[RMDB]
RNA sequence: GGGAACGACUCGAGUAGAGUCGAAAAGUCCAAGGGUAGUUGGUCACCAUCUCCACUAUGCCAGAUUUAAAUUGUGGCAUCGCGUAUUGGAAGUAGGUGUCAGACAUCCACGCGAUACCGAAGAUGAGAGUCCCUCAUCCUUCGGGAUGAGGGACUCAAAAGAAACAACAACAACAAC
Reactivity to 2A3 in 0.01 (KOAc 150mM, MgCl2 10mM, bicine 150mM(pH8.5), 24C), signal-to-noise 1, nucleotides 027 to 126: g000u000c070c000a160a180g050g000g020u090a060g000u050u120g040g050u050c000a000c070c000a100u050c010u000c000c000a040c020u070a060u100g210c010c020a040g020a050u030u150u250a180a250a300u140u230g160u130g120g000c000a010u000c010g000c000g000u040a170u270u240g090g000a000a000g000u160a060g150g000u040g060u180c090a000g000a010c000a050u000c020c000a000c020g000c050g040a000u040a130c000c020g050a020a000g040a090u100g060a010
Chemical mapping of a 177-nucleotide RNA with 2A3.
The RNA was probed in 150 mM KOAc, 10 mM MgCl2 and 150 mM bicine (pH 8.5) at 24 C.
Reactivities are given for positions 27 through 126.
The data come from the RNA Mapping Database (RMDB), library OK2TST.
2A3 adducts were read by reverse transcription with SuperScript II with manganese.